[RMDB]
RNA sequence: GGGAACGACUCGAGUAGAGUCGAAAAGACGGGCUGCACCUGCCGGAUGAUAUUCGUCUGGGGAUGCUGAUGCUUAUCAGCCAUUUUUACGAAAACCGCUCGUCGGUUACGGAAGUGGAGAAACUCACCUACGUGGGAGUUUCGACUCCCACGUAGGAAAAGAAACAACAACAACAAC
Reactivity to 2A3 in 0.01 (KOAc 150mM, MgCl2 10mM, bicine 150mM(pH8.5), 24C), signal-to-noise 3, nucleotides 027 to 126: g020a010c010g010g030g050c010u050g000c010a010c000c010u120g260c030c000g030g000a010u020g010a010u010a200u300u190c040g010u000c030u040g020g000g020g010a020u040g000c020u040g040a050u110g020c040u100u090a040u080c030a000g040c020c000a020u070u060u030u050u110a070c030g040a060a040a040a070c010c000g000c040u090c090g280u120c000g030g000u030u020a010c010g010g020a010a040g010u010g020g020a060g070a070a070a040c030u030c030a070
Reactivity to DMS in 0.01 (KOAc 150mM, MgCl2 10mM, bicine 150mM(pH8.5), 24C), signal-to-noise 4, nucleotides 027 to 126: g010a080c050g010g000g050c010u000g000c030a050c040c030u000g000c030c020g030g000a030u010g000a100u010a220u010u010c020g030u000c020u000g010g010g000g000a030u000g010c010u010g000a060u000g020c100u010u000a050u000c010a100g000c010c060a030u000u000u000u010u010a150c050g010a060a060a060a040c040c030g010c020u010c200g010u010c000g000g010u000u000a190c030g000g000a020a050g020u000g000g010a110g000a070a050a140c050u000c090a170